[RMDB]
RNA sequence: GGGAACGACUCGAGUAGAGUCGAAAAUGCUGCUAUGCAGUCUAAACUUACAGAUCUUAAAUGCACAUCUGUGGUUCUCCUCUCUGUGCUCCAACAGUUACACUUAGAGGCUAAUAGUAGGGCCUGGGCCCUUCAAGUACUUCGGUACUUGAAGGGCAAAAGAAACAACAACAACAAC
Reactivity to DMS in 0.01 (KOAc 150mM, MgCl2 10mM, bicine 150mM(pH8.5), 24C), signal-to-noise 2, nucleotides 027 to 126: u000g020c010u000g000c010u000a100u010g000c060a020g020u000c130u000a070a070a040c060u000u000a060c050a020g000a050u000c060u010u010a060a120a140u020g040c220a110c220a000u000c010u000g000u000g000g000u000u000c040u000c030c010u000c020u000c000u000g000u000g020c030u030c070c070a040a120c140a100g000u000u000a090c050a050c050u000u010a020g000a020g000g030c110u010a080a060u010a080g010u000a070g020g010g000c010c010u010g020g010
Reactivity to 2A3 in 0.01 (KOAc 150mM, MgCl2 10mM, bicine 150mM(pH8.5), 24C), signal-to-noise 2, nucleotides 027 to 126: u070g010c000u010g010c020u040a040u190g020c010a020g000u010c040u040a060a050a040c020u050u210a030c030a020g040a030u050c020u050u150a130a240a180u220g010c130a040c010a100u010c010u000g020u020g030g000u050u020c010u010c020c000u020c000u000c000u030g000u030g020c010u010c030c020a090a080c020a090g000u080u110a030c060a010c020u030u070a020g020a010g070g000c010u020a040a010u010a100g070u020a040g020g000g020c010c000u030g010g130

Structure probing data (DMS and 2A3) for a 177-nucleotide construct. The reactions ran in a buffer of 150 mM KOAc, 10 mM MgCl2 and 150 mM bicine (pH 8.5), at 24 C. For DMS the reverse transcriptase was MarathonRT. 2A3 adducts were read by reverse transcription with SuperScript II with manganese. For 2A3, 1,420 sequencing reads were counted.